An RNA of 177 nucleotides, treated with DMS and 2A3 and read out base by base. The DMS profile rests on 2,243 reads. 2A3 adducts were read by reverse transcription with SuperScript II with manganese. The RNA was probed in 150 mM KOAc, 10 mM MgCl2 and 150 mM bicine (pH 8.5) at 24 C.
RNA sequence: GGGAACGACUCGAGUAGAGUCGAAAAAUAUUAACGCUGACAGGUGAGCAGCUCUCCGAUAAGGUUGUCGAAAGAAUCCAUUGGUUAGAGGAAACGACGGCACUCGUGUCCAUUGGUCAGCGCUGGCCAAGGAGCAGUGAUUCGUCACUGCUCCUUGAAAAGAAACAACAACAACAAC
Reactivity to DMS in 0.01 (KOAc 150mM, MgCl2 10mM, bicine 150mM(pH8.5), 24C), signal-to-noise 2, nucleotides 027 to 126: a120u020a070u010u010a070a100c050g010c010u000g000a060c000a060g010g010u000g010a070g020c040a070g020c050u000c070u000c120c040g000a040u000a110a080g000g020u000u000g010u000c030g020a060a080a110g020a210a120u000c010c020a170u020u000g020g020u000u000a060g010a070g000g000a070a100a080c050g000a050c010g000g000c050a030c040u000c020g010u000g000u000c010c020a040u010u030g010g000u000c000a010g000c070g020c030u000g010g010c170
Reactivity to 2A3 in 0.01 (KOAc 150mM, MgCl2 10mM, bicine 150mM(pH8.5), 24C), signal-to-noise 1, nucleotides 027 to 126: a000u190a000u080u110a090a040c040g000c010u030g000a000c000a030g040g030u050g000a000g020c030a030g000c060u020c020u060c010c000g060a060u010a110a060g030g000u040u030g050u010c000g020a130a000a180g040a030a000u040c000c040a150u130u180g130g000u180u120a050g030a010g030g020a000a010a060c030g020a020c020g000g030c020a030c100u000c010g100u060g030u040c050c010a060u010u060g000g000u000c000a000g010c030g020c040u030g000g020c000